[RMDB]
RNA sequence: GGGAACGACUCGAGUAGAGUCGAAAAGAAGAUGAUGUGAAGGAUAGGUGGGAGGCUUUGAAGUGUGGACGCCAGUCUGCAUGGAGCCGACCUUGAAAUACCACCCUUUAAUGAAAAACAAAUACAAUGGACGUAUACGAUUCGUCGUAUACGUCCAAAAAGAAACAACAACAACAAC
Reactivity to DMS in 0.01 (KOAc 150mM, MgCl2 10mM, bicine 150mM(pH8.5), 24C), signal-to-noise 1, nucleotides 027 to 126: g010a170a140g000a020u020g010a120u000g010u000g000a060a070g000g000a030u010a050g010g000u000g020g000g040a300g000g000c000u000u000u010g030a190a070g000u030g030u000g000g000a000c020g040c050c280a090g010u000c000u010g000c000a010u000g000g000a000g010c000c010g000a180c040c040u010u050g000a060a040a090u000a090c000c010a060c040c010c110u000u000u000a050a060u010g000a070a090a030a070a070c110a160a090a070u000a090c160a090a100